Description:
This 177-nucleotide RNA was probed chemically with DMS. It was measured as part of the RMDB library TTRDEL. For DMS the reverse transcriptase was MarathonRT.
RNA sequence: GGGAACGACUCGAGUAGAGUCGAAAAGAUAUGGAAUGAACUACGAGCCGAGGAGCGUUGAAAUCGGAAACGAUGGAGCUCCGAAGUCUCGCAUUCCUAAGUCAAAAGGCAGACUUCGGUCUGCCAAUCGUGUGGAAUACUUCGGUAUUCCACACGAAAAAGAAACAACAACAACAAC
Reactivity to DMS in 0.01 (KOAc 150mM, MgCl2 10mM, bicine 150mM(pH8.5), 24C), signal-to-noise 1, nucleotides 027 to 126: g000a050u000a300u010g000g020a000a000u000g000a100a030c150u040a300c040g000a020g000c060c000g000a300g000g010a000g000c020g050u010u020g020a110a110a000u000c010g030g000a060a050a170c000g000a100u000g030g010a050g000c000u000c000c000g000a090a070g000u000c040u000c010g000c010a000u000u000c000c000u010a030a100g000u000c020a070a030a130a040g000g030c000a000g000a000c000u000u010c090g000g000u000c030u000g010c000c030a040a010